RNA sequence: GGGAACGACUCGAGUAGAGUCGAAAAUCAGCUUCGCGUCCUUGAGGCCUGGCGUAACGCGGCUCUUGCCACCAGGAUGCCUCCGCUAGUCGAGCGGACUUGGUCUCUUCCGUAGUCGAGCGGACUUGGUCUCUUCCGCCCAAAGCCCUUUCGCCCCGCUCAUAUGAUUGUUCGCAAUCAUAUGAGCAAAAGAAACAACAACAACAAC
Reactivity to 2A3 in 0.01 (KOAc 150mM, MgCl2 10mM, bicine 150mM(pH8.5), 24C), signal-to-noise 5, nucleotides 027 to 156: u090c010a010g040c040u100u100c060g010c030g060u060c030c040u060u100g030a040g010g020c000c010u020g010g000c030g050u120a160a050c160g010c040g150g000c030u050c000u050u120g040c050c030a080c010c020a010g040g020a160u120g020c010c010u020c010c000g000c020u050a060g120u140c060g080a020g010c000g010g000a000c020u060u110g040g010u030c020u000c000u100u020c020c010g030u050a060g110u070c040g040a020g010c000g000g010a010c040u090u150g030g010u020c000u010c000u080u010c020c010g010c020c010c000a040a050a030g020c010c020c000u050u100u070c040g010c020c010c010c040
Reactivity to DMS in 0.01 (KOAc 150mM, MgCl2 10mM, bicine 150mM(pH8.5), 24C), signal-to-noise 1, nucleotides 027 to 156: u040c020a070g010c020u010u000c040g040c050g000u000c030c070u000u000g000a110g000g020c010c030u000g010g040c040g030u010a070a120c060g030c030g040g000c020u010c120u000u000g040c010c010a090c020c040a120g020g000a100u010g020c030c020u020c030c050g000c020u000a090g010u000c100g000a270g000c010g000g020a020c080u000u000g000g030u000c040u000c090u000u000c010c040g010u000a180g000u000c080g030a140g030c020g000g010a070c070u000u010g020g020u000c030u000c040u000u010c000c000g000c030c000c010a090a100a120g040c000c020c010u030u010u000c080g020c060c000c000c070
An RNA of 207 nucleotides, treated with 2A3 and DMS and read out base by base. For DMS the reverse transcriptase was MarathonRT. For 2A3, 7,827 sequencing reads were counted. For DMS, 4,030 sequencing reads were counted. The reactions ran in a buffer of 150 mM KOAc, 10 mM MgCl2 and 150 mM bicine (pH 8.5), at 24 C. The data come from the RNA Mapping Database (RMDB), library VIROID. Reactivities are given for positions 27 through 156.